Notes: Chemical mapping of a 177-nucleotide RNA with 2A3 and DMS. The RNA was probed in 150 mM KOAc, 10 mM MgCl2 and 150 mM bicine (pH 8.5) at 24 C.
[RMDB]
RNA sequence: GGGAACGACUCGAGUAGAGUCGAAAAUUGACGGUGGGGUGGUCUUUACUCCAAUGAGCAUCGAACCACAGCGAAGUGGCUUCAUCGCAAAGAUGCAUUAGUCACGGAGCCACGUGGACAUGGCUAAGAUGAGUCCAGUAUUCGUACUGGACUCAUCAAAAGAAACAACAACAACAAC
Reactivity to 2A3 in 0.01 (KOAc 150mM, MgCl2 10mM, bicine 150mM(pH8.5), 24C), signal-to-noise 2, nucleotides 027 to 126: u080u090g050a020c080g060g020u040g010g060g010g000u040g020g020u030c030u030u090u040a050c010u010c010c000a030a080u210g060a040g000c040a020u060c050g030a110a050c000c010a010c010a000g020c020g010a020a010g000u000g000g000c000u030u000c010a020u000c000g060c130a290a160a080g010a020u010g010c030a100u000u130a000g000u000c000a010c000g000g000a000g000c030c000a180c120g010u000g000g000a020c020a030u090g060g000c010u040a030a020
Reactivity to DMS in 0.01 (KOAc 150mM, MgCl2 10mM, bicine 150mM(pH8.5), 24C), signal-to-noise 3, nucleotides 027 to 126: u010u000g000a080c080g010g010u000g010g010g000g020u000g030g000u000c040u000u000u000a080c030u020c010c080a080a100u030g010a060g060c040a040u000c120g000a150a020c010c000a050c050a170g000c040g010a300a220g010u010g000g000c000u000u000c020a020u000c010g000c130a090a100a120g010a000u000g000c300a100u010u000a020g040u020c010a010c060g000g020a300g010c010c040a040c210g000u000g000g010a140c040a070u000g010g030c030u000a060a090
The data come from the RNA Mapping Database (RMDB), library OK2TRN.